[RMDB]
RNA sequence: GGGAACGACUCGAGUAGAGUCGAAAAGAGCACUGGCUGGCUUUUGGUUGGAACCCGCGCUCCAACACCUGCUACCUUUUUGAUCCUUUUGGGUUCUCGGAUGAGCGACUCAAACAGAUUUACCAGUUUGAGUACGAGGGGCUCCUGCGCCGCAGUGAAGGUAAAAACAGUUCGCUGUUUUUACCUUAAAAGAAACAACAACAACAAC
Reactivity to DMS in 0.01 (KOAc 150mM, MgCl2 10mM, bicine 150mM(pH8.5), 24C), signal-to-noise 2, nucleotides 027 to 156: g010a140g010c010a070c080u010g000g030c030u010g010g020c060u000u010u000u010g040g050u010u000g020g040a030a050c010c030c140g020c170g040c040u000c000c040a060a070c050a080c020c010u000g000c050u000a060c080c020u000u000u000u000u000g010a040u000c010c020u000u000u010u000g000g020g000u000u000c030u000c000g020g050a180u010g010a110g010c010g010a060c000u000c000a020a020a040c020a130g010a300u010u000u000a090c080c050a300g020u000u000u010g000a030g020u000a020c060g010a100g020g010g010g040c010u000c060c030u020g020c010g000c050c040g000c040a070g020u000g000
Reactivity to 2A3 in 0.01 (KOAc 150mM, MgCl2 10mM, bicine 150mM(pH8.5), 24C), signal-to-noise 2, nucleotides 027 to 156: g060a000g060c030a020c050u050g100g040c100u120g030g020c040u130u210u160u130g160g050u060u040g020g010a080a060c020c000c010g000c040g020c030u070c020c010a090a060c020a070c060c000u040g030c090u090a060c030c010u000u020u020u040u200g130a070u100c020c000u040u090u160u080g030g020g000u050u030c000u030c050g000g110a080u120g020a050g060c040g000a000c000u000c010a000a010a000c020a030g110a140u100u190u220a130c070c020a030g010u040u000u000g010a010g010u020a040c020g030a090g000g010g030g040c030u030c000c000u090g050c060g030c040c020g000c000a000g010u000g080